Record summary: This 177-nucleotide RNA was probed chemically with DMS and 2A3. Reactivities are given for positions 27 through 126. For 2A3 the reverse transcriptase was SuperScript II with manganese. Conditions: 150 mM KOAc, 10 mM MgCl2 and 150 mM bicine (pH 8.5), 24 C.

RNA sequence: GGGAACGACUCGAGUAGAGUCGAAAAAGAUGAGGGGGGGAUAAAGUACACUGCAAACUGGUUCAGAGACAAUGAGUUCAAGUUCAAGAACAAGAGCUUUGAUGUUUGUGUAUACAAACUCAUUGAAUCACUACCCUAUAUUCGUAUAGGGUAGUGAAAAAGAAACAACAACAACAAC
Reactivity to DMS in 0.01 (KOAc 150mM, MgCl2 10mM, bicine 150mM(pH8.5), 24C), signal-to-noise 4, nucleotides 027 to 126: a090g020a060u010g010a060g010g000g000g000g020g000g010a110u000a040a040a100g020u000a070c060a080c080u000g020c070a050a060a090c070u010g010g010u010u000c040a100g010a110g020a110c070a050a070u010g000a070g010u010u010c060a040a110g000u000u000c110a070a130g000a050a060c130a060a190g000a060g000c010u000u010u010g010a080u000g010u000u000u000g000u000g010u010a050u020a020c020a020a020a070c020u000c000a020u010u020g000a100a150
Reactivity to 2A3 in 0.01 (KOAc 150mM, MgCl2 10mM, bicine 150mM(pH8.5), 24C), signal-to-noise 2, nucleotides 027 to 126: a040g070a060u090g040a030g000g020g000g030g020g000g010a010u080a050a040a000g010u010a010c050a020c040u070g080c050a060a010a030c030u020g000g110u070u080c020a010g020a020g000a070c030a020a030u060g010a020g050u030u030c020a030a010g020u050u040c010a090a120g070a190a030c040a060a020g050a010g050c000u100u090u100g040a070u130g090u010u060u000g040u050g030u030a040u020a140c020a020a030a020c020u000c010a010u000u090g030a050a050